The record gives the reactivity of an RNA of 177 nucleotides to 2A3 and DMS. The reactions ran in a buffer of 150 mM KOAc, 10 mM MgCl2 and 150 mM bicine (pH 8.5), at 24 C.
[RMDB]
RNA sequence: GGGAACGACUCGAGUAGAGUCGAAAAGACGAAGAUAGCGAAAGCUAGAAAAGAUCCGUGGCUAAAUAGGAAACUGAAGAGAGCUGCUCGGCUGAGAAGCCGUGCCACGGAAGCAGCUCCAAGAGAAAGGUAAAUCGCAUUUCGAUGCGAUUUACCUAAAAGAAACAACAACAACAAC
Reactivity to 2A3 in 0.01 (KOAc 150mM, MgCl2 10mM, bicine 150mM(pH8.5), 24C), signal-to-noise 2, nucleotides 027 to 126: g070a000c030g020a020a070g120a130u060a000g000c040g010a080a040a000g010c000u010a080g070a040a040a000a000g030a020u000c000c000g000u000g010g000c060u100a040a120a140u070a080g130g060a250a250a010c110u150g110a090a070g150a020g000a000g000c000u000g000c010u010c030g000g000c010u000g030a030g000a050a000g000c000c000g020u010g030c000c000a000c000g000g000a000a000g000c020a010g000c000u020c000c000a100a030g170a010g040a040a250
Reactivity to DMS in 0.01 (KOAc 150mM, MgCl2 10mM, bicine 150mM(pH8.5), 24C), signal-to-noise 2, nucleotides 027 to 126: g000a160c060g030a100a100g000a100u030a030g000c000g040a200a140a190g040c020u030a030g000a150a100a220a190g010a080u000c000c030g070u000g000g000c010u030a040a110a190u010a140g010g020a080a070a110c100u050g090a010a120g000a250g000a110g000c020u000g000c000u000c020g000g010c000u010g000a160g000a090a060g010c000c040g020u000g000c010c000a000c010g010g000a010a000g000c030a000g000c000u000c000c110a160a100g030a050g010a040a070

DMS adducts were read by reverse transcription with MarathonRT. 2A3 adducts were read by reverse transcription with SuperScript II with manganese.